[RMDB]
RNA sequence: GGGAACGACUCGAGUAGAGUCGAAAAGGCGCAGUACGUACGUGCUACGAGAUCGCGUGGCCGUGGCCAUGAGCGCGUGAUCUAUGCGCGCACGUGCGCAGUACGCGCUGGCCGGCCCAGUAGUACCGGAAGGUGUGUGGUUCGCCACACACCUUCCAAAAGAAACAACAACAACAAC
Reactivity to 2A3 in 0.01 (KOAc 150mM, MgCl2 10mM, bicine 150mM(pH8.5), 24C), signal-to-noise 2, nucleotides 027 to 126: g040g020c090g000c140a080g020u140a020c000g010u010a000c010g050u050g000c030u070a060c050g070a080g000a120u230c070g010c010g110u070g070g000c030c070g050u150g080g070c070c000a060u150g070a020g070c000g010c010g010u030g070a080u070c110u160a100u290g060c070g000c010g000c030a030c040g050u020g010c040g010c000a000g010u010a010c000g000c010g000c030u010g000g010c010c050g000g000c030c000c020a030g070u140a020g010u010a110c050c110
Reactivity to DMS in 0.01 (KOAc 150mM, MgCl2 10mM, bicine 150mM(pH8.5), 24C), signal-to-noise 2, nucleotides 027 to 126: g010g010c000g020c000a040g010u000a050c040g040u010a010c030g010u010g010c000u000a050c050g000a080g010a110u010c110g030c050g030u010g010g000c010c090g000u010g030g010c030c030a040u030g000a070g030c010g050c000g010u020g000a090u000c170u040a060u000g030c030g010c160g000c010a120c050g020u010g010c070g000c010a080g000u000a040c020g000c000g000c030u010g020g010c000c040g010g000c010c000c020a110g000u020a080g000u020a140c160c060
This 177-nucleotide RNA was probed chemically with 2A3 and DMS. DMS adducts were read by reverse transcription with MarathonRT. Values cover nucleotides 27 to 126. The 2A3 profile rests on 2,108 reads. The DMS profile rests on 1,373 reads.